[RMDB]
RNA sequence: GGGAACGACUCGAGUAGAGUCGAAAAGAUAUGGACGAUCCUUAGGGAGAGCGGAGAGACGUUGAAAGCUUUCGGAAACGAAAGCUGGAGUCUUUAAGCUCUUUGAUCUAAGGAUCGUCCUAAGUCAUCCUGAUCAUAUGUUCGCAUAUGAUCAGGAAAAAGAAACAACAACAACAAC
Reactivity to DMS in 0.01 (KOAc 150mM, MgCl2 10mM, bicine 150mM(pH8.5), 24C), signal-to-noise 2, nucleotides 027 to 126: g000a070u000a300u000g000g000a020c010g010a010u000c000c000u000u000a000g000g000g000a010g000a010g020c000g000g020a190g000a000g010a020c000g000u000u000g010a200a150a070g000c000u000u000u010c000g000g000a120a140a190c010g020a020a000a010g020c000u000g000g010a040g000u000c000u000u000u000a230a300g000c000u000c000u000u030u020g020a110u000c010u000a000a000g010g000a010u000c000g000u000c000c000u000a000a070g010u000c010a160

Chemical mapping of a 177-nucleotide RNA with DMS.
The RNA was probed in 150 mM KOAc, 10 mM MgCl2 and 150 mM bicine (pH 8.5) at 24 C.
Values cover nucleotides 27 to 126.